An RNA of 207 nucleotides, treated with DMS and 2A3 and read out base by base. For 2A3 the reverse transcriptase was SuperScript II with manganese. DMS adducts were read by reverse transcription with MarathonRT. For DMS, 7,734 sequencing reads were counted. It was measured as part of the RMDB library RNAMAK. As a SHAPE reagent, 2A3 marks flexible, mostly unpaired nucleotides at the ribose 2'-OH.
[RMDB]
RNA sequence: GGGAACGACUCGAGUAGAGUCGAAAAGUGUACACGCUGGGCACGGGAGAGCAUGUACGGGAGUGAACUGAAGCGCGCACGGUUCACGACGAUCGUACACUAGCUCCACCGUGCCUGUGCUGAAGCGCGCACGGCAACCGAAAGGUGCGUUCAUUAACUUAAUAUCACUGUUCGCAGUGAUAUUAAGAAAAGAAACAACAACAACAAC
Reactivity to DMS in 0.01 (KOAc 150mM, MgCl2 10mM, bicine 150mM(pH8.5), 24C), signal-to-noise 3, nucleotides 027 to 156: g020u010g040u000a140c090a080c030g030c000u000g020g000g000c030a040c010g020g040g000a170g030a080g050c020a100u000g000u010a000c010g000g030g010a050g040u010g010a050a010c010u000g000a050a040g040c020g020c020g000c000a300c040g000g000u000u000c010a020c020g030a110c150g020a030u000c000g020u000a010c010a020c240u000a150g000c000u000c010c050a180c000c010g020u000g000c000c000u000g010u000g000c010u010g000a070a070g030c000g010c020g000c010a300c030g000g000c010a040a040c010c000g000a060a100a120g010g020u000g020c050g030u000u000c050a150u000u000a060a230
Reactivity to 2A3 in 0.01 (KOAc 150mM, MgCl2 10mM, bicine 150mM(pH8.5), 24C), signal-to-noise 2, nucleotides 027 to 156: g080u050g030u040a070c040a010c070g010c000u010g000g000g000c010a000c000g000g030g000a170g000a000g030c010a010u020g000u000a000c000g000g000g000a020g000u000g000a000a000c000u010g040a220a040g020c000g000c000g000c000a020c010g020g000u000u000c000a000c020g110a030c010g000a020u000c000g000u010a000c010a030c070u100a050g000c000u000c000c000a080c000c000g000u000g010c000c000u000g000u000g000c000u010g020a110a020g000c000g000c000g000c010a040c030g000g000c010a000a010c010c000g050a070a030a010g000g000u000g000c000g000u010u030c020a030u050u140a070a040